[RMDB]
RNA sequence: GGGAACGACUCGAGUAGAGUCGAAAAGAUAUGGAACGAUCGACGUAGACAAUGAUGCUUCUUCGGAAACGAAGAAGUUGAGUCUAUGUCGAGUCGUUCCUAAGUCAAAGUACGCUUCGGCGUACAACAAUAUCCGUGAGUUCGCUCACGGAUAUUGAAAAGAAACAACAACAACAAC
Reactivity to DMS in 0.01 (KOAc 150mM, MgCl2 10mM, bicine 150mM(pH8.5), 24C), signal-to-noise 6, nucleotides 027 to 126: g010a050u010a300u000g010g000a010a000c000g010a100u000c000g000a010c000g020u000a000g000a010c000a230a200u010g000a100u000g000c000u000u000c000u000u000c000g010g020a140a110a210c010g010a010a010g000a000a000g010u000u010g010a110g010u000c000u010a000u010g010u000c000g000a010g020u010c000g020u000u000c000c000u000a010a120g010u000c050a120a140a160g010u000a010c010g020c000u000u030c220g030g010c010g010u000a010c000a120a150
Reactivity to 2A3 in 0.01 (KOAc 150mM, MgCl2 10mM, bicine 150mM(pH8.5), 24C), signal-to-noise 4, nucleotides 027 to 126: g020a010u070a040u250g000g000a010a000c010g000a010u030c010g010a010c000g000u000a010g000a010c020a170a300u180g030a010u140g050c000u010u000c000u000u000c000g030g010a060a080a080c010g000a000a020g000a010a000g000u000u010g000a000g000u000c000u000a000u000g010u000c000g000a000g000u010c000g000u000u000c000c000u000a030a010g010u000c040a070a020a130g000u010a000c000g000c010u040u140c300g220g000c000g000u000a010c000a000a030